[RMDB]
The record gives the reactivity of an RNA of 177 nucleotides to DMS and 2A3. DMS (dimethyl sulfate) methylates the pairing face of unpaired adenines and cytosines. 2A3 adducts were read by reverse transcription with SuperScript II with manganese. It was measured as part of the RMDB library OK2TRN. For DMS the reverse transcriptase was MarathonRT. The RNA was probed in 150 mM KOAc, 10 mM MgCl2 and 150 mM bicine (pH 8.5) at 24 C.
RNA sequence: GGGAACGACUCGAGUAGAGUCGAAAAUCGAGGCGAGUCUCGCGCGUGAGAGACAACGCGACGCCGAGAACCGACGUAUCCGUGAAGAGCAGGACCGUCUUCGUGUGCUUUUUGAACGCGAAAAAGCGCUGCCUGAUAUCUUCGGAUAUCAGGCAGCAAAAGAAACAACAACAACAAC
Reactivity to DMS in 0.01 (KOAc 150mM, MgCl2 10mM, bicine 150mM(pH8.5), 24C), signal-to-noise 1, nucleotides 027 to 126: u000c060g010a150g000g030c050g050a230g000u000c160u000c070g010c040g010c040g000u000g000a150g000a130g010a130c110a100a090c060g010c070g000a120c060g040c020c010g010a170g000a090a140c030c030g000a010c040g000u000a160u000c010c020g000u020g000a020a100g000a070g000c020a080g000g040a080c300c000g000u000c030u000u000c020g040u000g020u000g020c050u000u000u000u000u000g000a100a090c050g000c000g010a000a060a020a160a120g010c150
Reactivity to 2A3 in 0.01 (KOAc 150mM, MgCl2 10mM, bicine 150mM(pH8.5), 24C), signal-to-noise 1, nucleotides 027 to 126: u010c010g000a010g000g050c050g000a040g130u000c010u000c060g020c000g020c010g020u060g060a260g000a010g030a070c010a040a030c110g000c030g060a070c030g040c000c000g010a020g010a030a050c050c020g020a010c010g020u020a100u030c040c040g020u050g050a060a040g030a040g110c100a060g000g030a000c020c040g040u050c000u020u030c040g040u020g020u020g050c050u070u180u040u130u280g050a040a000c020g010c020g050a000a070a000a000a030g110c080